[RMDB]
The data come from the RNA Mapping Database (RMDB), library OK2TRN. This 177-nucleotide RNA was probed chemically with DMS and 2A3. Values are in units of 0.01, from 0 to 300, in steps of 10. DMS adducts were read by reverse transcription with MarathonRT. For DMS, 1,364 sequencing reads were counted.

RNA sequence: GGGAACGACUCGAGUAGAGUCGAAAAGCGGUGUUAUGGCACGCCGGGCAUGAGCUCCCUGCGGGACCGGCAGGGCCGCACCAUCUGGUUCCAGGGGGAUCCUGGACCCUUGGCGCCCAAAGGGGGCGUUUGCUGUGGGAUUCGUCCCACAGCAAACAAAAGAAACAACAACAACAAC
Reactivity to DMS in 0.01 (KOAc 150mM, MgCl2 10mM, bicine 150mM(pH8.5), 24C), signal-to-noise 2, nucleotides 027 to 126: g020c160g020g050u000g020u000u010a090u040g050g010c040a180c100g000c010c000g010g000g000c160a070u000g000a190g010c020u000c020c010c010u030g040c300g000g000g000a080c030c000g000g030c000a110g050g010g020c040c020g000c030a060c010c030a130u020c070u000g020g030u000u000c000c000a050g000g010g020g010g010a110u020c010c000u010g000g010a060c000c000c050u000u000g010g020c190g010c010c000c050a040a300a050g010g000g030g010g000c100
Reactivity to 2A3 in 0.01 (KOAc 150mM, MgCl2 10mM, bicine 150mM(pH8.5), 24C), signal-to-noise 1, nucleotides 027 to 126: g000c040g000g000u060g000u080u260a290u220g070g000c030a010c040g000c000c000g040g030g000c090a110u100g110a020g050c000u060c010c020c000u020g000c010g040g040g050a090c030c010g100g000c060a140g060g090g050c020c000g060c000a000c020c020a050u060c080u070g060g000u080u010c010c010a010g000g000g040g040g000a080u300c020c010u040g010g020a040c000c000c000u060u080g080g090c050g010c020c030c000a030a050a020g000g000g000g000g000c000
The 2A3 profile rests on 1,008 reads.